The record gives the reactivity of an RNA of 177 nucleotides to DMS and 2A3.
[RMDB]
RNA sequence: GGGAACGACUCGAGUAGAGUCGAAAAAUAUUAAUGCCGAUCGAUAUAUGCUAUAUAAUUAGCGCGCAUCGCGGCAUCGGCGCUACGCGUAAUUACGGCAUGCGCCGAUGCAUGCCGAUUAUAGCUACCGUCCGAAUAAAUUCGUUUAUUCGGACGGAAAAGAAACAACAACAACAAC
Reactivity to DMS in 0.01 (KOAc 150mM, MgCl2 10mM, bicine 150mM(pH8.5), 24C), signal-to-noise 1, nucleotides 027 to 126: a090u000a050u010u000a110a120u000g020c030c020g010a100u000c070g000a110u000a050u000a070u030g010c020u010a010u020a040u010a070a070u010u000a070g030c040g000c120g030c090a050u010c080g000c040g000g000c020a020u000c010g000g010c010g020c030u000a020c110g040c000g000u010a070a120u000u020a120c000g010g000c060a040u000g000c000g020c100c030g000a030u000g000c010a040u000g020c070c020g010a040u000u000a040u000a040g000c050u000a160
Reactivity to 2A3 in 0.01 (KOAc 150mM, MgCl2 10mM, bicine 150mM(pH8.5), 24C), signal-to-noise 2, nucleotides 027 to 126: a000u240a070u150u140a150a070u070g000c010c010g040a100u060c030g040a000u040a020u000a040u300g000c010u030a010u000a030u030a140a240u180u080a020g030c040g020c020g000c040a030u060c030g030c000g060g000c010a000u000c010g000g040c020g020c020u050a030c120g080c020g080u050a120a180u260u210a110c050g130g020c050a010u050g010c000g000c050c050g000a000u020g000c000a020u030g000c020c000g000a000u070u020a050u020a030g030c010u010a040
The data come from the RNA Mapping Database (RMDB), library OK2TRN. Values cover nucleotides 27 to 126. The DMS profile rests on 1,369 reads. Conditions: 150 mM KOAc, 10 mM MgCl2 and 150 mM bicine (pH 8.5), 24 C. DMS (dimethyl sulfate) methylates the pairing face of unpaired adenines and cytosines.